This 177-nucleotide RNA was probed chemically with DMS and 2A3. As a SHAPE reagent, 2A3 marks flexible, mostly unpaired nucleotides at the ribose 2'-OH. Conditions: 150 mM KOAc, 10 mM MgCl2 and 150 mM bicine (pH 8.5), 24 C. DMS adducts were read by reverse transcription with MarathonRT.
RNA sequence: GGGAACGACUCGAGUAGAGUCGAAAACUGACGCCUUGCGUGUUACGGUUGUUUCGCAAAAGUUGACCGAACUUGAUUAUUUAGAGGAAGUAAAAGUCGUACCAAGGUUUCCGUAGGUGAACCUACGCCAUCUCAAAUAGUUCGCUAUUUGAGAUGGAAAAGAAACAACAACAACAAC
Reactivity to DMS in 0.01 (KOAc 150mM, MgCl2 10mM, bicine 150mM(pH8.5), 24C), signal-to-noise 5, nucleotides 027 to 126: c050u000g000a110c090g010c020c030u000u000g010c140g010u000g010u010u000a070c140g000g000u000u000g010u000u010u000c070g000c140a070a050a090a070g000u000u010g010a070c070c040g010a110a050c040u000u000g000a140u000u000a090u000u000u010a120g000a130g000g000a080a080g010u000a050a090a100a060g000u000c020g010u000a050c040c010a080a080g010g000u000u000u000c030c020g030u000a010g010g010u000g010a100a160c020c000u010a000c030g010
Reactivity to 2A3 in 0.01 (KOAc 150mM, MgCl2 10mM, bicine 150mM(pH8.5), 24C), signal-to-noise 4, nucleotides 027 to 126: c020u020g060a020c030g020c010c040u060u110g030c090g060u060g040u040u050a040c020g040g000u020u050g050u030u120u030c020g000c040a030a080a040a090g050u070u070g050a070c010c010g010a020a030c030u030u040g050a050u150u230a100u080u170u100a070g030a030g070g100a100a030g020u070a000a100a040a030g000u010c020g010u010a020c020c010a040a040g100g000u010u000u030c000c010g020u010a010g050g030u130g190a120a120c000c000u010a010c010g000